[RMDB]
RNA sequence: GGGAACGACUCGAGUAGAGUCGAAAAAGUGGUUUCUCUGAACGCAGAGUUGGAACCGCCUGACGUUGCAUGUUCGCACCCAUCAAAGCACGGUUCGCAUCGUCGUGUUCUAGGAACGGGAUCAAGAGGAUCCCGUCCAUUUCGAUGGACGGGAUCCAAAAGAAACAACAACAACAAC
Reactivity to DMS in 0.01 (KOAc 150mM, MgCl2 10mM, bicine 150mM(pH8.5), 24C), signal-to-noise 2, nucleotides 027 to 126: a100g000u010g020g020u000u000u000c000u000c130u010g000a070a050c080g020c030a110g030a110g020u000u020g000g000a020a020c020c040g010c190c050u010g000a060c190g010u000u000g060c090a090u010g020u020u010c160g000c070a090c170c090c050a040u000c040a070a080a130g040c050a050c030g000g010u000u010c010g030c050a050u000c010g000u010c010g000u010g020u000u010c000u000a080g000g010a000a130c030g000g010g000a080u000c060a050a080g000a300